[RMDB]
RNA sequence: GGGAACGACUCGAGUAGAGUCGAAAAGACACGACGGAGACGUCGUGUCAAGUCCAGUGCGAAAGCACUGGACAAAUAAGGGCUGUCUUUCUCGCUGACUUACAGCCCCAAACAAACAAUGUCAGCAAUUUAUUUACUAUUUCGAUAGUAAAUAAAUAAAAGAAACAACAACAACAAC
Reactivity to DMS in 0.01 (KOAc 150mM, MgCl2 10mM, bicine 150mM(pH8.5), 24C), signal-to-noise 6, nucleotides 027 to 126: g010a010c000a000c010g010a010c000g000g000a250g000a260c010g020u000c000g040u000g000u010c000a020a080g010u000c000c000a010g020u000g010c000g010a120a070a160g020c000a010c000u000g000g010a000c000a010a040a070u020a130a150g010g000g020c000u000g000u000c100u000u000u000c060u000c170g010c010u000g000a020c010u000u000a030c010a010g000c010c000c000c130a020a030a170c070a040a040a050c080a030a030u010g010u000c010a010g010c000a180
Reactivity to 2A3 in 0.01 (KOAc 150mM, MgCl2 10mM, bicine 150mM(pH8.5), 24C), signal-to-noise 3, nucleotides 027 to 126: g000a000c000a000c000g000a000c010g010g020a050g020a060c000g000u000c000g000u000g000u000c000a000a000g000u000c000c010a000g010u000g000c000g080a120a030a020g000c000a000c000u000g010g010a000c010a000a010a000u080a050a050g020g000g000c000u000g010u030c030u020u100u000c100u050c070g000c000u000g000a000c000u020u020a000c000a000g000c010c000c020c030a040a090a010c020a010a030a010c020a020a050u080g010u020c000a000g000c000a000
Structure probing data (DMS and 2A3) for a 177-nucleotide construct. Conditions: 150 mM KOAc, 10 mM MgCl2 and 150 mM bicine (pH 8.5), 24 C. Values cover nucleotides 27 to 126.